[RMDB]
RNA sequence: GGGAACGACUCGAGUAGAGUCGAAAACAUUGGCAUUUCGAUGCCAAUGGGUCUGCGUCGCGCGCCCGCCGAGUCGUUCCCGCGGCCGCGUGACGCAGUUUGGGCAGCUCGAGUUCGCUCGAGCUAAGGUAACGAUAUCUUUCGAGAUAUCGUUACCAAAAGAAACAACAACAACAAC
Reactivity to 2A3 in 0.01 (KOAc 150mM, MgCl2 10mM, bicine 150mM(pH8.5), 24C), signal-to-noise 2, nucleotides 027 to 126: c000a000u000u010g010g000c010a000u030u090u120c260g110a010u030g000c000c000a000a000u000g000g000g020u000c000u000g000c020g020u020c000g000c000g010c000g020c010c010c000g010c080c150g130a120g050u020c000g000u010u000c000c000c010g010c000g000g000c010c000g010c000g000u000g010a000c000g020c010a000g010u010u090u030g020g010g030c070a010g000c000u000c000g010a000g000u040u080c190g020c030u000c010g000a000g000c010u030a030a020
Reactivity to DMS in 0.01 (KOAc 150mM, MgCl2 10mM, bicine 150mM(pH8.5), 24C), signal-to-noise 4, nucleotides 027 to 126: c000a020u010u000g000g010c000a010u000u000u010c180g020a030u000g010c000c000a010a000u000g000g000g000u000c010u000g010c010g000u000c010g000c010g010c000g020c300c000c010g010c020c210g000a120g010u000c000g010u000u000c000c000c000g030c000g000g010c150c010g010c000g020u000g000a010c000g010c000a000g000u000u000u000g010g010g010c160a040g010c000u000c000g010a030g000u000u010c220g010c000u000c000g000a010g010c000u000a000a050
Chemical mapping of a 177-nucleotide RNA with 2A3 and DMS. 2A3 adducts were read by reverse transcription with SuperScript II with manganese. The RNA was probed in 150 mM KOAc, 10 mM MgCl2 and 150 mM bicine (pH 8.5) at 24 C. For DMS the reverse transcriptase was MarathonRT. Reactivities are given for positions 27 through 126. The data come from the RNA Mapping Database (RMDB), library M2PK50.